[RMDB]
RNA sequence: GGGAACGACUCGAGUAGAGUCGAAAAGUACGAUUUUUCGAAAUCGUACGAAGGUCAGGUGGCAGCACCACGACACUGGUCGCGGCGACCGAGCCGAACACAAUAUGUGUAAUUUCGAUUACACAAAUGUUUAGGUUCUCUUCGGAGAACCUAAACAAAAAGAAACAACAACAACAAC
Reactivity to DMS in 0.01 (KOAc 150mM, MgCl2 10mM, bicine 150mM(pH8.5), 24C), signal-to-noise 1, nucleotides 027 to 126: g020u000a010c000g000a000u000u000u000u000u000c180g000a020a020a000u000c000g050u000a000c020g010a180a060g000g010u000c060a230g000g020u020g000g010c060a010g020c030a030c000c010a010c060g010a150c300a120c230u100g020g020u000c120g020c010g000g060c020g010a040c000c020g020a270g020c010c000g010a070a090c230a070c100a070a040u020a060u000g020u000g010u000a020a040u020u000u010c210g010a010u000u000a000c000a000c000a030a050a080
Reactivity to 2A3 in 0.01 (KOAc 150mM, MgCl2 10mM, bicine 150mM(pH8.5), 24C), signal-to-noise 1, nucleotides 027 to 126: g000u000a000c000g000a010u000u040u000u000u170c160g060a020a000a000u000c000g010u000a000c020g000a080a010g030g030u070c000a010g040g030u030g060g000c010a000g000c000a010c010c010a010c040g130a010c020a020c060u060g000g050u050c110g000c020g000g000c030g010a010c000c000g000a030g050c030c000g100a130a000c090a000c030a050a060u230a130u160g030u010g020u000a010a010u030u080u060c180g000a000u020u020a010c000a000c000a010a090a040

Description:
The record gives the reactivity of an RNA of 177 nucleotides to DMS and 2A3. Reactivities are rounded to 0.1 and cut off at 0 and 3. It was measured as part of the RMDB library M2PK50. High DMS reactivity at an A or C suggests that its Watson-Crick edge is free. Conditions: 150 mM KOAc, 10 mM MgCl2 and 150 mM bicine (pH 8.5), 24 C. Reactivities are given for positions 27 through 126.